[RMDB]
RNA sequence: GGGAACGACUCGAGUAGAGUCGAAAAGAACUAGUCUCAGGCUUCAACAUCGAAUACGCCGCAGGCCCCUUCGCCUUAUUCUUCAUAGCCGAAUACACAAACAUUAUUAUAAUAAACACCCUCACCAUCGACUACGUCCAUUCGUGGACGUAGUCGAAAAAGAAACAACAACAACAAC
Reactivity to 2A3 in 0.01 (KOAc 150mM, MgCl2 10mM, bicine 150mM(pH8.5), 24C), signal-to-noise 1, nucleotides 027 to 126: g010a050a050c080u060a010g060u050c000u000c060a050g040g000c000u020u030c040a060a070c000a020u090c000g120a190a070u120a160c150g030c000c020g080c060a010g080g000c000c000c000c010u000u060c000g000c000c000u020u110a060u100u000c040u130u020c070a290u180a020g010c060c040g000a050a000u100a080c070a000c000a000a060a090c040a010u040u150a040u070u210a110u090a020a210u040a010a000a100c090a000c000c000c000u000c000a070c060c020a070
This 177-nucleotide RNA was probed chemically with 2A3. The reactions ran in a buffer of 150 mM KOAc, 10 mM MgCl2 and 150 mM bicine (pH 8.5), at 24 C.